[RMDB]
RNA sequence: GGGAACGACUCGAGUAGAGUCGAAAAGCUAAUUGUCUUUGAAAUCUGAUGAUGGCAGAACAACACUGCCACUGGCCUUGAGGAUACUGGCCCUGCAUUGCCAUCAAGUAUCUGCAGAAAUUGAAGAACCCUCUACUAAGUUCGCUUAGUAGAGGGUAAAAGAAACAACAACAACAAC
Reactivity to 2A3 in 0.01 (KOAc 150mM, MgCl2 10mM, bicine 150mM(pH8.5), 24C), signal-to-noise 3, nucleotides 027 to 126: g050c030u050a110a050u210u140g030u070c010u010u000u030g050a080a080a050u030c030u030g030a070u070g010a060u020g050g000c010a010g070a130a040c060a030a010c020a060c040u020g000c000c010a020c000u020g040g020c020c020u050u070g100a060g020g040a040u060a120c030u060g050g000c010c000c020u040g010c040a080u060u150g000c000c010a010u050c020a040a060g020u010a040u050c020u030g000c010a000g020a040a100a070u060u060g010a040a000g010a030
Reactivity to DMS in 0.01 (KOAc 150mM, MgCl2 10mM, bicine 150mM(pH8.5), 24C), signal-to-noise 5, nucleotides 027 to 126: g010c080u010a090a110u010u000g010u000c000u000u000u000g010a030a050a270u000c020u010g010a130u000g000a070u000g010g010c010a020g000a110a100c180a090a120c160a060c060u000g000c010c060a050c090u010g010g020c090c080u010u020g020a220g020g010a050u000a020c080u000g020g020c020c040c100u000g010c070a080u000u000g010c020c010a050u000c120a090a090g010u000a040u000c060u000g030c040a020g000a020a030a270u010u000g000a040a050g000a070
The data come from the RNA Mapping Database (RMDB), library OK2TRN. This 177-nucleotide RNA was probed chemically with 2A3 and DMS. The RNA was probed in 150 mM KOAc, 10 mM MgCl2 and 150 mM bicine (pH 8.5) at 24 C. DMS adducts were read by reverse transcription with MarathonRT. The DMS profile rests on 4,045 reads. For 2A3, 3,553 sequencing reads were counted.